[RMDB]
RNA sequence: GGGAACGACUCGAGUAGAGUCGAAAAGGGAUGGGAUCCGAAGCCCCAUUGAGGGAUAAUACAGGCUCUCCCAUCCUACUCCUAUUCCAACACGUCCUCGUCGUACAGAGUGGUAACAUGUGUCACCUAUACUAAUGACCGUUCGCGGUCAUUAGAACUUCUCCAUAGAGUUCGCUCUAUGGAGAAGAAAAGAAACAACAACAACAAC
Reactivity to DMS in 0.01 (KOAc 150mM, MgCl2 10mM, bicine 150mM(pH8.5), 24C), signal-to-noise 2, nucleotides 027 to 156: g000g000g020a030u000g010g020g020a070u000c020c060g000a170a170g030c050c000c000c020a300u000u000g010a110g000g000g000a130u000a080a100u010a100c070a190g030g010c040u010c070u000c000c000c000a020u000c000c010u000a020c080u000c010c000u000a160u010u000c060c040a090a080c080a090c030g040u000c010c040u000c050g010u000c050g040u000a070c030a080g010a070g020u000g000g000u000a050a080c090a080u020g030u010g010u010c040a040c010c000u000a120u030a150c000u000a020a020u020g000a050c000c000g050u010u000c300g010c020g040g000u000c000a000u000u000a000g000a040a080
Reactivity to 2A3 in 0.01 (KOAc 150mM, MgCl2 10mM, bicine 150mM(pH8.5), 24C), signal-to-noise 6, nucleotides 027 to 156: g010g000g000a020u020g010g000g020a030u160c000c020g030a070a040g040c000c010c020c030a130u170u300g050a300g020g020g000a030u120a180a030u150a280c190a060g000g000c000u000c000u000c010c000c000a000u010c000c000u000a010c000u010c000c000u040a110u090u070c060c020a030a020c030a020c060g040u040c010c000u040c020g150u030c010g030u120a070c040a070g060a030g060u080g010g040u090a080a030c040a100u120g020u020g030u060c030a060c050c040u100a070u150a300c000u000a030a000u000g000a000c000c000g010u030u040c300g000c000g070g000u000c000a020u000u000a000g000a010a020